An RNA of 177 nucleotides, treated with 2A3 and DMS and read out base by base. Reactivities are rounded to 0.1 and cut off at 0 and 3. Values cover nucleotides 27 to 126.
RNA sequence: GGGAACGACUCGAGUAGAGUCGAAAAAAGCCAAGGAGCUGAAGUCGCUUGAGAAAGAAAUUGCUGGCCAAGAUGAGGACCACUUCAUUACAGUGGACGCUGUGGGUUGCUUCGAGGGUGAUGAAGACGCUGCAUGUAGUUUCGACUACAUGCAGCGAAAAGAAACAACAACAACAAC
Reactivity to 2A3 in 0.01 (KOAc 150mM, MgCl2 10mM, bicine 150mM(pH8.5), 24C), signal-to-noise 2, nucleotides 027 to 126: a000a000g070c030c050a080a030g060g030a040g020c020u060g100a110a000g070u040c000g000c120u000u070g010a010g080a060a100a010g030a010a180a100u170u120g030c050u030g000g010c000c000a060a010g030a140u110g000a010g050g070a030c000c000a150c000u090u070c020a110u000u140a000c060a040g030u120g090g030a020c060g000c100u010g000u070g260g020g000u030u020g020c010u030u020c040g050a020g050g000g020u100g000a100u090g040a060a020g060a000
Reactivity to DMS in 0.01 (KOAc 150mM, MgCl2 10mM, bicine 150mM(pH8.5), 24C), signal-to-noise 2, nucleotides 027 to 126: a170a100g020c000c000a080a110g040g000a060g050c010u020g040a130a070g000u010c050g010c010u000u000g010a060g000a080a050a190g000a050a040a080u030u030g000c030u000g030g010c030c020a060a060g000a080u000g000a030g000g000a080c030c030a090c010u000u020c170a170u010u070a080c150a050g020u000g000g000a190c060g000c050u000g090u000g010g050g000u000u000g000c110u000u000c040g000a140g030g000g020u000g000a100u000g000a100a060g000a130